This 177-nucleotide RNA was probed chemically with 2A3 and DMS. The reactions ran in a buffer of 150 mM KOAc, 10 mM MgCl2 and 150 mM bicine (pH 8.5), at 24 C. It was measured as part of the RMDB library OK1LIB.
RNA sequence: GGGAACGACUCGAGUAGAGUCGAAAAGUGGUCGAGUCCGAAGGACUGGGGUAGUGAAAUAAAGAGAGAGAGAGCUACCCCGUCUGUCAGUCACUCUCUGUCUGACUCUCUCUCUCAAAGACCACAAAAUUAGCCUAAUGUUCGCAUUAGGCUAAUUAAAAGAAACAACAACAACAAC
Reactivity to 2A3 in 0.01 (KOAc 150mM, MgCl2 10mM, bicine 150mM(pH8.5), 24C), signal-to-noise 7, nucleotides 027 to 126: g020u010g000g000u010c020g010a030g050u000c030c040g080a140a120g080g010a010c070u100g000g010g000g000u010a000g020u000g190a100a060a070u240a090a220a000g030a000g000a000g000a000g000a000g000a000g010c010u010a010c010c010c010c000g000u020c000u020g010u000c010a000g010u040c030a040c100u110c020u020c060u060g010u020c020u020g010a030c000u010c000u000c000u000c000u000c000u000c000a010a030a000g010a000c010c000a010c020a030a060
Reactivity to DMS in 0.01 (KOAc 150mM, MgCl2 10mM, bicine 150mM(pH8.5), 24C), signal-to-noise 6, nucleotides 027 to 126: g000u010g010g010u020c010g000a090g020u010c010c040g010a180a090g010g010a060c050u010g010g010g010g010u000a010g010u010g010a090a110a110u050a070a080a090g010a020g000a020g010a030g010a010g000a130g000c040u000a020c030c000c000c020g010u030c060u020g010u000c060a040g010u000c100a090c300u030c120u020c130u020g000u010c020u000g010a080c020u010c010u010c000u000c000u000c000u010c020a050a080a120g000a010c020c010a000c020a070a070